An RNA of 207 nucleotides, treated with DMS and 2A3 and read out base by base. For 2A3 the reverse transcriptase was SuperScript II with manganese. For 2A3, 685 sequencing reads were counted. Values are in units of 0.01, from 0 to 300, in steps of 10. DMS adducts were read by reverse transcription with MarathonRT. The RNA was probed in 150 mM KOAc, 10 mM MgCl2 and 150 mM bicine (pH 8.5) at 24 C. For DMS, 1,762 sequencing reads were counted. Values cover nucleotides 27 to 156.
[RMDB]
RNA sequence: GGGAACGACUCGAGUAGAGUCGAAAAGGCCAGAGUAGGCUCAGACAGACUCCAGCAAAGCCACGUGGUGGAAGAAGAUUUCUGGACAGAAAAGUGAAAGUGAUGUACAGAAAACAGAAGUGAGACACAGAAACAGCUGGAUUGGUUACAGCUUGGAAGGAGGAGGUAAUUUCGAUUACCUCCUCCUAAAAGAAACAACAACAACAAC
Reactivity to DMS in 0.01 (KOAc 150mM, MgCl2 10mM, bicine 150mM(pH8.5), 24C), signal-to-noise 2, nucleotides 027 to 156: g020g080c030c040a190g000a190g080u000a140g050g010c050u010c090a090g010a110c080a130g030a060c030u010c010c010a260g000c070a100a060a090g010c020c010a110c050g040u000g030g040u010g040g020a060a060g000a030a120g000a240u000u000u010c010u010g000g000a060c010a060g040a070a070a110a120g040u010g000a090a090a170g020u000g020a200u000g010u020a040c040a040g000a050a050a010a270c030a080g000a030a060g020u010g000a080g020a050c090a110c070a090g000a060a070a100c050a100g020c030u010g000g030a170u000u000g010g020u000u000a140c150a050g000c050u000u000g000g010a150
Reactivity to 2A3 in 0.01 (KOAc 150mM, MgCl2 10mM, bicine 150mM(pH8.5), 24C), signal-to-noise 2, nucleotides 027 to 156: g100g000c050c010a020g040a050g110u150a050g020g000c020u010c040a010g060a020c000a040g040a010c030u000c000c020a060g000c050a090a100a070g040c020c020a010c090g130u150g030g010u020g020g040a000a000g060a030a000g020a050u030u030u030c000u070g050g020a040c020a040g170a060a050a010a000g110u100g060a130a010a040g080u110g070a020u020g010u010a020c000a030g010a060a060a080a050c040a030g120a170a020g060u050g030a050g040a010c000a000c000a050g110a040a120a010c040a020g000c010u010g020g010a080u060u070g000g000u070u060a040c020a040g070c000u040u050g110g000a090